[RMDB]
RNA sequence: GGGAACGACUCGAGUAGAGUCGAAAACUCGUCUGGUUCGCCAGACGAGAAAGAAAAUCCCAGCGAAGGGAAGGGCACAAACGCUCGGAGUGCCCAAACCCAAAACGUGGGGGUUCGCCCCCACGAAUCCUAAUAAUUAGUUCGCUAAUUAUUAGGAAAAAGAAACAACAACAACAAC
Reactivity to DMS in 0.01 (KOAc 150mM, MgCl2 10mM, bicine 150mM(pH8.5), 24C), signal-to-noise 4, nucleotides 027 to 126: c000u000c000g010u000c000u000g010g030u010u010c200g030c010c010a010g010a000c000g010a000g000a020a050a110g000a080a080a130a180u000c000c000c000a130g010c210g000a160a130g000g000g020a230a240g000g000g020c000a020c010a030a070a140c080g000c180u030c150g020g010a180g010u000g000c010c000c000a000a050a140c000c010c020a030a040a090a150c030g020u000g000g010g010g000g030u000u010c200g000c010c010c000c000c000a000c000g000a030a060
Reactivity to 2A3 in 0.01 (KOAc 150mM, MgCl2 10mM, bicine 150mM(pH8.5), 24C), signal-to-noise 3, nucleotides 027 to 126: c000u000c000g020u000c000u010g010g060u040u060c190g040c070c000a010g000a000c000g000a000g010a010a030a000g020a000a090a000a010u020c020c000c000a010g130c090g140a180a140g000g020g020a020a060g010g000g000c050a040c030a060a300a010c150g050c100u190c140g020g030a030g000u010g000c030c000c010a000a040a030c010c000c000a000a040a010a050c010g000u000g010g000g000g000g020u010u030c200g080c000c000c000c000c000a000c000g010a010a030

The record gives the reactivity of an RNA of 177 nucleotides to DMS and 2A3. Values cover nucleotides 27 to 126. The reactions ran in a buffer of 150 mM KOAc, 10 mM MgCl2 and 150 mM bicine (pH 8.5), at 24 C. DMS adducts were read by reverse transcription with MarathonRT.